[RMDB]
RNA sequence: GGGAACGACUCGAGUAGAGUCGAAAAAUCAGCAAAGUUAUGGGAACAAAUUCUGUGUUUUGUACGCUGCCAGAGACUGCAUAGUAUUCAAGUUAUUAGUGAAAGCAGCAAAGCUGUACUAAGUUAGUAUAAGAAAAUCUAACAUUUAUGAAAUAUGAGUAUGGUCACUAUUCGUAGUGACCAUACUAAAAGAAACAACAACAACAAC
Reactivity to 2A3 in 0.01 (KOAc 150mM, MgCl2 10mM, bicine 150mM(pH8.5), 24C), signal-to-noise 3, nucleotides 027 to 156: a000u040c010a000g070c010a000a060a110g050u160u110a100u160g020g040g050a070a060c050a070a090a060u160u060c080u040g050u000g030u050u030u070u040g060u050a060c090g010c060u020g010c010c000a040g010a030g020a130c020u030g010c060a060u080a070g030u070a110u090u110c080a150a040g010u110u180a110u080u130a080g050u020g080a080a030a040g010c010a000g010c000a020a020a020g000c040u070g010u030a040c010u040a080a060g010u020u010a010g020u050a100u040a290a060g060a040a110a050a020u040c010u010a000a020c010a020u090u140u100a150u170g040a020a060a070u240a130u110g020
Reactivity to DMS in 0.01 (KOAc 150mM, MgCl2 10mM, bicine 150mM(pH8.5), 24C), signal-to-noise 3, nucleotides 027 to 156: a110u010c060a100g030c050a060a030a080g020u000u000a070u000g010g010g000a070a160c030a080a090a080u010u000c070u000g000u000g010u020u010u000u000g040u010a060c070g000c020u000g030c010c050a150g010a160g010a060c020u000g000c030a100u000a070g010u000a110u010u000c080a110a130g020u000u000a080u010u000a100g020u000g010a110a120a110g030c010a060g000c000a070a060a110g030c030u000g010u000a130c040u000a070a140g010u000u000a080g020u010a060u000a130a200g000a080a050a070a090u000c020u000a020a050c020a160u010u000u000a110u040g010a060a020a110u000a080u010g000
Structure probing data (2A3 and DMS) for a 207-nucleotide construct. Conditions: 150 mM KOAc, 10 mM MgCl2 and 150 mM bicine (pH 8.5), 24 C. The 2A3 profile rests on 1,711 reads. For DMS the reverse transcriptase was MarathonRT. In probing experiments dimethyl sulfate is read out at A N1 and C N3, which are open when not base-paired. 2A3 adducts were read by reverse transcription with SuperScript II with manganese.